Structure probing data (DMS and 2A3) for a 177-nucleotide construct. For DMS the reverse transcriptase was MarathonRT. It was measured as part of the RMDB library OK2TST. The reactions ran in a buffer of 150 mM KOAc, 10 mM MgCl2 and 150 mM bicine (pH 8.5), at 24 C. For 2A3 the reverse transcriptase was SuperScript II with manganese.
[RMDB]
RNA sequence: GGGAACGACUCGAGUAGAGUCGAAAAGUGGUUUAACCAUUGAGCGGGUUAAUUGCAUCACCGGUGAGAUUGAAGUUAUUUAUCGUGCUCAGCAUGGCGCUCAUGUCGGUGUGGUGACCGUGAGCCCGCACAACGAUAGCUUCGGCUAUCGUUGUGCAAAAGAAACAACAACAACAAC
Reactivity to DMS in 0.01 (KOAc 150mM, MgCl2 10mM, bicine 150mM(pH8.5), 24C), signal-to-noise 1, nucleotides 027 to 126: g070u000g000g000u010u000u030a100a030c010c000a060u000u030g010a210g010c040g000g010g030u010u030a050a060u010u030g010c020a060u000c000a030c020c030g000g000u000g000a030g020a040u000u000g020a180a140g000u010u030a050u010u010u040a110u000c020g060u010g000c030u010c170a140g010c050a020u000g000g000c190g000c000u000c000a010u000g000u000c000g050g010u080g040u000g030g020u000g000a070c030c000g020u030g000a130g050c010c020c010
Reactivity to 2A3 in 0.01 (KOAc 150mM, MgCl2 10mM, bicine 150mM(pH8.5), 24C), signal-to-noise 1, nucleotides 027 to 126: g090u000g030g030u040u120u140a020a050c000c000a000u000u090g060a010g050c030g000g020g030u000u120a070a000u080u190g140c020a080u020c010a000c000c000g000g020u000g030a080g020a140u170u300g080a170a060g080u180u150a290u090u270u100a140u140c030g000u000g030c030u010c130a050g010c020a030u020g050g010c060g000c040u000c000a010u060g190u170c180g170g080u220g030u030g100g040u000g010a120c010c010g000u030g010a010g000c030c000c010